Structure probing data (2A3 and DMS) for a 177-nucleotide construct. Reactivities are given for positions 27 through 126. The reactions ran in a buffer of 150 mM KOAc, 10 mM MgCl2 and 150 mM bicine (pH 8.5), at 24 C. For DMS, 1,261 sequencing reads were counted.
[RMDB]
RNA sequence: GGGAACGACUCGAGUAGAGUCGAAAAGCGGAAACUGCUGGAGAGGAACUAUGAUGCGAUCUUUGGAAUCACUAUUCCCCUCACAAUAACGGGUGAUGACAGCGGCAAGGCCUUGGCUAGGUCCAUCACUCGGUGUCGUUUUCGAACGACACCGAGUAAAAGAAACAACAACAACAAC
Reactivity to 2A3 in 0.01 (KOAc 150mM, MgCl2 10mM, bicine 150mM(pH8.5), 24C), signal-to-noise 1, nucleotides 027 to 126: g030c020g100g010a090a030a030c060u030g000c030u030g060g030a070g020a030g040g020a040a040c100u050a080u140g000a030u060g040c010g100a070u060c040u100u110u120g100g090a100a040u050c010a020c070u080a070u020u020c020c030c040c000u040c000a080c040a020a030u100a070a040c100g040g000g000u010g010a010u020g030a000c000a000g000c040g000g000c020a000a050g040g030c020c020u060u020g070g000c020u030a000g130g020u030c050c010a030u030c000
Reactivity to DMS in 0.01 (KOAc 150mM, MgCl2 10mM, bicine 150mM(pH8.5), 24C), signal-to-noise 2, nucleotides 027 to 126: g030c080g000g010a130a070a080c050u000g000c090u020g020g020a080g040a070g010g010a070a050c080u000a050u020g020a080u000g020c100g020a050u000c080u030u000u020g020g010a170a020u000c020a020c030u010a180u020u000c020c000c010c070u000c070a030c210a110a040u010a080a100c130g010g000g040u000g000a060u000g000a110c050a000g010c100g010g000c060a010a100g020g020c040c030u000u000g020g000c040u000a060g010g050u030c050c060a050u000c080